[RMDB]
RNA sequence: GGGAACGACUCGAGUAGAGUCGAAAAGCGUACUACCUUGACAUGCUCCAUGGAGGACGAUAAGUAGGCUCCCAAAUAGGAGCCUACUUUUGACGUCUGAGGUGGAGCAACAGCAAGGUAUCGCAAAUCUGUAUCUAGCCUUCGGGCUAGAUACAGACCGUGUGUCUUACUUCGGUAAGACACACGGAAAAGAAACAACAACAACAAC
Reactivity to 2A3 in 0.01 (KOAc 150mM, MgCl2 10mM, bicine 150mM(pH8.5), 24C), signal-to-noise 1, nucleotides 027 to 156: g000c010g050u090a170c060u000a000c040c020u030u010g060a200c000a060u040g000c000u020c000c000a000u050g080g020a100g000g000a030c010g030a070u010a010a000g000u010a000g000g000c000u020c020c060c040a180a220a050u300a100g000g010a000g020c000c000u000a000c020u000u000u000u010g000a000c010g000u000c020u020g000a030g000g070u000g000g000a000g010c010a010a010c000a000g020c000a000a010g000g040u000a010u170c000g000c020a040a010a150u020c000u000g000u010a000u000c000u000a000g000c000c010u070u080c270g060g000g000c000u000a000g000a000u000a000c000a010g000a000
Reactivity to DMS in 0.01 (KOAc 150mM, MgCl2 10mM, bicine 150mM(pH8.5), 24C), signal-to-noise 2, nucleotides 027 to 156: g010c010g010u000a080c100u000a020c000c000u000u000g030a070c050a300u000g000c000u000c010c010a040u030g000g000a300g010g010a000c010g020a230u000a010a020g010u000a020g020g030c000u000c020c000c010a000a200a140u000a020g000g020a040g000c000c000u000a000c000u000u000u000u000g020a280c170g030u010c000u000g010a300g040g010u000g000g000a030g000c000a010a010c050a100g030c010a030a030g000g000u010a010u000c030g020c060a040a050a160u010c010u000g010u010a010u000c000u010a000g000c010c000u000u010c300g020g000g030c010u030a010g010a000u000a000c000a010g000a010
Conditions: 150 mM KOAc, 10 mM MgCl2 and 150 mM bicine (pH 8.5), 24 C. The record gives the reactivity of an RNA of 207 nucleotides to 2A3 and DMS. For 2A3 the reverse transcriptase was SuperScript II with manganese. Values cover nucleotides 27 to 156. For 2A3, 1,365 sequencing reads were counted. It was measured as part of the RMDB library RNAMAK. DMS adducts were read by reverse transcription with MarathonRT.